[RMDB]
RNA sequence: GGGAACGACUCGAGUAGAGUCGAAAAGGAUCUGAGUACUUAUAAGUGCGAAGUGAGUGAGGGUCUUACGAGCACGAAUUACAUCCCUCUAUUAAGUAUCGAAGAUCGGCCGGAGAUCGAGAUACGACUAUUAGCCGGCGACUGUACGAAGAUCCGACGGCAUACUGAUAUUCGUAUCAGUAUGCCGAAAAGAAACAACAACAACAAC
Reactivity to 2A3 in 0.01 (KOAc 150mM, MgCl2 10mM, bicine 150mM(pH8.5), 24C), signal-to-noise 5, nucleotides 027 to 156: g000g000a000u010c010u030g020a000g030u000a010c030u120u130a110u130a300a090g010u010g000c000g040a030a000g000u010g010a010g010u110g000a010g000g000g010u130c000u010u010a000c000g010a010g010c010a000c020g080a100a080u160u080a060c050a120u130c010c010c010u010c000u010a150u120u210a160a030g000u010a010u010c000g020a060a000g010a030u010c020g030g020c000c010g020g010a120g000a030u000c000g010a000g000a070u010a010c010g010a000c010u040a100u300u110a070g070c010c000g010g000c020g030a080c080u090g000u000a000c000g000a000a000g000a000u000c000c000g000a000
Reactivity to DMS in 0.01 (KOAc 150mM, MgCl2 10mM, bicine 150mM(pH8.5), 24C), signal-to-noise 2, nucleotides 027 to 156: g030g010a030u000c010u010g010a300g010u000a050c040u000u020a080u000a060a140g020u000g040c010g010a110a280g000u010g050a110g000u000g030a130g000g020g000u010c040u000u000a040c050g000a300g030c010a030c040g000a100a050u000u010a110c070a100u000c000c000c000u000c050u000a200u020u010a080a140g000u000a040u010c000g000a260a230g000a070u000c000g030g000c100c070g010g020a300g000a070u000c030g000a300g010a110u000a050c030g000a060c160u000a150u010u010a110g000c030c010g000g010c050g000a100c040u030g030u020a030c080g000a140a040g010a110u010c010c000g010a080